This 177-nucleotide RNA was probed chemically with DMS and 2A3.
Source: RMDB library M2PK50, as collected in RNAgym.
As a SHAPE reagent, 2A3 marks flexible, mostly unpaired nucleotides at the ribose 2'-OH.
Conditions: 150 mM KOAc, 10 mM MgCl2 and 150 mM bicine (pH 8.5), 24 C.
For 2A3, 10,758 sequencing reads were counted.
For 2A3 the reverse transcriptase was SuperScript II with manganese.
Values cover nucleotides 27 to 126.

RNA sequence: GGGAACGACUCGAGUAGAGUCGAAAAGUCGUGUCCUUCGGGACACGACAAACAUGGUAAACGCCGACACCAUGAAAGAUCGAUAAACGAUCAAGGCGUAAAAAAGUCUAACCUUCGGGUUAGACAAGGUUAAUUUAUUGUUCGCAAUAAAUUAACCAAAAGAAACAACAACAACAAC
Reactivity to DMS in 0.01 (KOAc 150mM, MgCl2 10mM, bicine 150mM(pH8.5), 24C), signal-to-noise 4, nucleotides 027 to 126: g010u000c000g020u000g020u000c000c000u010u010c180g030g020g020a010c010a000c010g000a000c000a010a030a190c030a040u000g000g020u000a090a080a030c030g010c000c010g030a260c200a040c000c000a000u000g000a100a100a140g000a020u000c000g020a180u010a050a120a240c000g010a000u000c020a050a130g010g010c010g020u000a000a070a040a090a070a070g010u000c000u000a000a000c000c000u000u010c180g030g020g010u000u000a000g000a000c010a010a010
Reactivity to 2A3 in 0.01 (KOAc 150mM, MgCl2 10mM, bicine 150mM(pH8.5), 24C), signal-to-noise 4, nucleotides 027 to 126: g000u000c000g000u000g000u010c000c000u010u040c200g060g000g000a000c000a000c000g000a000c010a000a000a000c000a000u000g000g000u050a150a150a020c010g010c010c010g090a090c050a030c080c000a010u020g010a220a100a010g000a000u000c000g010a040u140a280a200a110c010g000a000u000c010a000a020g000g000c000g010u040a020a030a000a020a010a040g000u010c000u000a000a010c000c000u030u050c250g080g010g000u000u010a000g000a000c000a000a020